[RMDB]
RNA sequence: GGGAACGACUCGAGUAGAGUCGAAAAUGGGACGUACGGCUAUCAAUGUCAGUGGUGCGAUGACUUCCGGACUUGUGAGUAGUCGCUGGCAAAAGACGCUUAAUCUUGAGCGCUACAACGAUCCAACCCGUGCAUAGCAUUUCGAUGCUAUGCACGGAAAAGAAACAACAACAACAAC
Reactivity to DMS in 0.01 (KOAc 150mM, MgCl2 10mM, bicine 150mM(pH8.5), 24C), signal-to-noise 2, nucleotides 027 to 126: u000g040g020g000a040c040g010u000a120c140g000g020c050u000a110u000c040a090a130u020g040u000c060a080g040u000g010g020u000g020c030g000a080u000g000a040c030u010u000c090c030g000g000a060c100u000u010g020u000g010a120g020u000a090g010u030c010g000c060u010g010g000c120a060a080a120a080g010a080c040g010c070u010u000a030a150u000c130u000u020g000a070g000c000g020c050u000a040c150a090a040c060g000a040u000c010c010a100a150c140
Reactivity to 2A3 in 0.01 (KOAc 150mM, MgCl2 10mM, bicine 150mM(pH8.5), 24C), signal-to-noise 2, nucleotides 027 to 126: u060g020g000g020a000c010g010u050a000c040g040g000c060u030a030u190c050a090a050u050g020u000c030a020g070u080g100g050u070g050c070g040a090u120g040a040c000u150u040c030c020g000g070a030c050u120u140g050u020g120a050g020u030a010g010u060c030g000c050u010g020g000c040a070a060a000a020g070a060c040g000c070u120u100a080a100u060c070u090u160g060a020g000c020g000c010u000a020c000a120a000c040g010a060u000c020c000a010a040c000
An RNA of 177 nucleotides, treated with DMS and 2A3 and read out base by base.
It was measured as part of the RMDB library OK2TST.
For 2A3 the reverse transcriptase was SuperScript II with manganese.
The reactions ran in a buffer of 150 mM KOAc, 10 mM MgCl2 and 150 mM bicine (pH 8.5), at 24 C.
For 2A3, 1,876 sequencing reads were counted.